Record summary:
Chemical mapping of a 177-nucleotide RNA with 2A3 and DMS. It was measured as part of the RMDB library TTRDES. High DMS reactivity at an A or C suggests that its Watson-Crick edge is free. 2A3 is a SHAPE reagent: it acylates the 2'-hydroxyl of flexible nucleotides of all four kinds.
[RMDB]
RNA sequence: GGGAACGACUCGAGUAGAGUCGAAAAGAUAUGGACCCUACCCGAGGGAGCUCAGACUCGGAAACGAGUCUCGAGCAUCGAUCUCGGUGAGGGUCCUAAGUCAAACAGUGAGCUUCGGCUCACUGAACAAUACUGACCUGUUCGCAGGUCAGUAUUGAAAAGAAACAACAACAACAAC
Reactivity to 2A3 in 0.01 (KOAc 150mM, MgCl2 10mM, bicine 150mM(pH8.5), 24C), signal-to-noise 3, nucleotides 027 to 126: g020a010u070a040u160g000g000a010c010c010c000u050a140c020c020c010g000a000g050g080g040a020g000c000u010c000a010g000a000c000u000c020g010g000a070a050a020c000g000a000g000u020c000u010c040g010a010g000c000a020u270c010g040a050u030c010u010c000g030g070u110g010a010g000g010g000u000c000c000u010a010a000g010u000c010a010a040a060c010a010g010u010g000a010g000c030u060u250c300g160g010c000u000c010a000c000u010g000a020a010
Reactivity to DMS in 0.01 (KOAc 150mM, MgCl2 10mM, bicine 150mM(pH8.5), 24C), signal-to-noise 6, nucleotides 027 to 126: g020a030u010a300u000g010g010a010c000c000c000u000a080c210c000c000g000a020g010g000g010a040g020c010u000c000a020g000a010c000u010c000g010g010a090a100a180c000g000a020g010u000c000u000c160g030a000g020c010a140u000c210g010a080u020c000u000c000g010g000u000g000a060g000g010g010u010c000c000u000a000a060g010u010c050a160a140a280c010a010g010u000g010a000g000c010u000u020c220g010g010c000u000c000a000c000u000g010a070a170